[RMDB]
RNA sequence: GGGAACGACUCGAGUAGAGUCGAAAAGGCCAGCACCUCGCCGUAGACCGGCUGGCCCUUGGCGCGGGCAUAGGCGAUCUCGUCCAGCGCCUCGCGGCUGGAAAUAUGUACCAGGUACAGCGGCGUACGGCGAUGCUAUAUUCGUAUAGCAUCGCCGAAAAGAAACAACAACAACAAC
Reactivity to DMS in 0.01 (KOAc 150mM, MgCl2 10mM, bicine 150mM(pH8.5), 24C), signal-to-noise 1, nucleotides 027 to 126: g000g010c000c010a000g020c060a170c090c020u000c020g020c030c010g000u020a120g010a090c030c010g000g010c030u000g000g030c000c000c030u000u000g000g000c040g010c030g000g000g050c010a100u020a070g000g020c170g010a130u010c110u000c170g010u000c010c030a150g060c040g000c000c000u000c040g020c020g020g000c000u020g020g000a080a080a100u000a060u000g050u020a170c010c000a110g010g000u000a070c060a110g020c010g000g010c040g020u010a060
Reactivity to 2A3 in 0.01 (KOAc 150mM, MgCl2 10mM, bicine 150mM(pH8.5), 24C), signal-to-noise 1, nucleotides 027 to 126: g040g020c010c020a010g000c010a070c030c050u060c000g020c010c000g010u010a030g070a080c010c000g070g000c010u000g000g000c000c000c010u020u030g030g000c000g000c000g000g040g000c090a110u090a120g040g100c050g080a150u100c050u060c100g020u000c010c000a060g000c010g030c010c000u020c040g030c060g020g000c000u000g080g130a050a140a040u300a100u190g070u050a100c000c020a050g040g060u060a060c030a050g010c000g020g000c020g020u040a010